RNA sequence: GGGAACGACUCGAGUAGAGUCGAAAACGACCGAUGGAUCGAGAUAUUCUCGACGGUAUCUUAAGCGGAGGUACAAGAGACUAGCGCGCUACCCGAGCCGAGUAGGCAGGCUUGGCUGAUACUAGGCUCUAGGGAUGCUCUUCGGGGCAUCUCUAGAAAAAGAAACAACAACAACAAC
Reactivity to 2A3 in 0.01 (KOAc 150mM, MgCl2 10mM, bicine 150mM(pH8.5), 24C), signal-to-noise 9, nucleotides 027 to 126: c040g030a020c000c000g020a040u070g050g030a070u030c010g010a000g000a020u060a050u130u080c010u000c010g010a010c010g000g000u020a020u020c010u030u050a050a000g030c010g010g020a020g000g010u020a010c010a000a000g030a000g000a010c010u020a000g010c020g000c000g000c020u020a030c000c000c010g010a000g000c000c000g000a010g010u040a030g030g080c020a010g010g020c010u040u030g020g010c000u010g000a010u010a050c010u010a020g030g000c000
Reactivity to DMS in 0.01 (KOAc 150mM, MgCl2 10mM, bicine 150mM(pH8.5), 24C), signal-to-noise 9, nucleotides 027 to 126: c110g010a110c040c020g000a130u020g010g010a110u010c020g010a030g000a120u030a090u020u010c010u000c020g010a070c050g000g000u010a020u010c030u010u010a080a110g010c060g000g010a070g000g010u010a040c080a000a000g000a110g000a070c060u000a050g010c050g010c050g010c040u000a100c100c010c010g000a040g010c000c000g000a060g000u010a040g000g010c020a060g000g000c090u010u010g010g010c040u000g000a150u010a030c030u000a070g000g000c050